[RMDB]
RNA sequence: GGGAACGACUCGAGUAGAGUCGAAAAUCAAAGAGAAUCAAUGAUCCAAUUUGUCUACCGCAUCAUUCAGUCAUUUAACGAGUCUAGUUUGAAUUUGGGUGACUCGGUAUGUGGAUGAAUGAGUCGGGAUAUAACUAAAGUUCGCUUUAGUUAUAUCAAAAGAAACAACAACAACAAC
Reactivity to 2A3 in 0.01 (KOAc 150mM, MgCl2 10mM, bicine 150mM(pH8.5), 24C), signal-to-noise 9, nucleotides 027 to 126: u070c030a030a050a020g110a020g070a090a110u110c050a050a100u140g030a010u010c020c030a050a110u060u070u150g080u020c040u060a050c010c000g000c020a050u010c000a000u020u000c000a000g060u000c010a010u020u010u010a020a010c010g010a000g000u000c020u060a070g130u100u130u250g230a210a170u150u110u130g200g040g030u070g010a000c000u000c010g000g000u020a010u010g020u010g010g010a020u010g000a000a000u010g000a010g020u020c000g010g020
Reactivity to DMS in 0.01 (KOAc 150mM, MgCl2 10mM, bicine 150mM(pH8.5), 24C), signal-to-noise 8, nucleotides 027 to 126: u010c040a050a050a140g000a250g000a080a060u010c050a090a180u010g010a040u000c020c020a080a170u010u000u010g000u000c080u000a250c010c000g000c080a060u000c010a000u000u000c000a010g000u000c010a010u000u000u000a020a030c010g010a040g000u000c020u000a110g010u010u010u010g010a090a160u000u010u010g020g000g010u000g000a010c010u000c000g000g000u000a010u000g020u010g000g000a020u000g010a030a010u000g000a020g010u000c020g010g010